[RMDB]
RNA sequence: GGGAACGACUCGAGUAGAGUCGAAAAAUCGUCCGCGAUCUACGCCGACCCAUUUUCGCUUCGAACCAAGCGUAUUUGAGUGACGCACCGACGUAGAAGACCGACUGGCAUCACGUUAAAGAAGCUGUCGCCAUAUGCGAUUCGUCGCAUAUGGCGAAAAAGAAACAACAACAACAAC
Reactivity to 2A3 in 0.01 (KOAc 150mM, MgCl2 10mM, bicine 150mM(pH8.5), 24C), signal-to-noise 3, nucleotides 027 to 126: a000u140c020g050u020c010c000g020c040g060a090u070c000u030a000c000g030c000c000g050a120c000c000c000a010u020u020u070u040c010g000c000u080u010c140g100a080a080c060c020a030a060g030c010g000u030a020u030u060u080g110a110g000u030g080a050c000g010c000a000c020c000g120a080c050g020u040a120g030a110a000g020a020c010c060g040a040c000u130g070g000c010a090u060c020a020c050g020u040u140a190a070a060g030a180a070g050c010u030g050
Reactivity to DMS in 0.01 (KOAc 150mM, MgCl2 10mM, bicine 150mM(pH8.5), 24C), signal-to-noise 2, nucleotides 027 to 126: a040u000c000g010u000c070c110g000c100g000a150u050c000u000a140c130g000c000c000g000a120c120c000c000a050u040u000u000u040c080g000c000u000u000c210g030a130a090c070c250a000a040g040c100g040u000a040u090u020u040g000a090g040u000g010a040c050g020c120a150c230c030g000a040c130g000u040a050g010a030a130g020a170c160c040g000a020c040u060g010g000c010a170u000c000a040c140g000u040u010a060a030a070g000a020a060g000c050u000g010